[RMDB]
RNA sequence: GGGAACGACUCGAGUAGAGUCGAAAAGACCAGACUUUAGAGGUCGCUGUUCUGAGCUUAACGUCUGUUUUAACUGAAACGCCGCAUUCUACACUACAACGCUAAGGCGAGGAAAUGUUCAUAGUGUCCUUUGAUACAAGUUCGCUUGUAUCAAAGGAAAAGAAACAACAACAACAAC
Reactivity to DMS in 0.01 (KOAc 150mM, MgCl2 10mM, bicine 150mM(pH8.5), 24C), signal-to-noise 2, nucleotides 027 to 126: g000a110c020c040a140g000a070c070u020u000u000a130g030a140g000g000u000c020g020c090u010g010u000u020c050u000g040a240g020c050u000u000a070a080c060g000u010c090u000g000u000u000u000u000a050a120c160u000g010a110a060a090c120g000c050c030g010c040a110u000u000c020u000a080c160a030c080u000a060c090a050a060c090g000c030u000a040a030g020g000c000g000a160g020g000a030a050a080u000g010u020u000c090a070u000a040g010u000g010u020
Reactivity to 2A3 in 0.01 (KOAc 150mM, MgCl2 10mM, bicine 150mM(pH8.5), 24C), signal-to-noise 2, nucleotides 027 to 126: g040a010c030c030a000g090a060c030u140u160u170a110g040a040g180g040u030c010g050c060u070g060u090u000c030u030g030a040g010c020u070u020a030a000c030g030u010c030u060g100u050u020u020u070a090a050c040u030g040a030a000a080c070g050c070c030g010c040a010u070u000c020u050a030c000a000c020u120a020c000a050a010c000g010c010u040a070a010g090g000c020g010a030g000g070a070a090a040u150g020u060u100c100a130u080a140g090u080g040u070